[RMDB]
RNA sequence: GGGAACGACUCGAGUAGAGUCGAAAAAUGAUAGUCCCACACCGUAGGAUUCUUCUGGAUCUGUCGCCUUGAGAAUCCUCAGUCCGCCGGCGCAGAGAGCAGACAGGGGUCUCUGGUAGACUGGGGCACCUACCACAGGAUUCGUCCUGUGGUAGGUAAAAGAAACAACAACAACAAC
Reactivity to DMS in 0.01 (KOAc 150mM, MgCl2 10mM, bicine 150mM(pH8.5), 24C), signal-to-noise 2, nucleotides 027 to 126: a030u010g010a140u000a130g000u010c000c000c000a120c140a060c070c100g010u000a060g010g020a030u010u000c020u000u030c130u020g000g000a070u000c050u000g000u000c130g010c000c030u010u000g010a050g000a090a040u000c020c020u000c050a050g000u000c040c060g050c060c120g020g000c080g010c090a060g000a070g010a070g000c070a090g000a090c120a060g020g010g000g010u000c020u000c040u000g010g020u000a060g020a060c050u010g010g000g000g020c250
Reactivity to 2A3 in 0.01 (KOAc 150mM, MgCl2 10mM, bicine 150mM(pH8.5), 24C), signal-to-noise 2, nucleotides 027 to 126: a010u270g040a100u080a080g080u010c020c030c010a020c020a020c010c050g070u100a030g010g010a010u050u000c010u080u020c040u080g030g050a070u060c050u140g080u190c050g030c020c000u020u060g050a020g000a110a040u000c060c000u010c000a000g050u010c010c040g040c010c020g100g000c030g000c030a020g040a020g000a060g100c040a000g060a200c030a080g040g000g040g050u000c020u000c010u040g060g000u040a060g040a060c050u030g020g000g000g000c020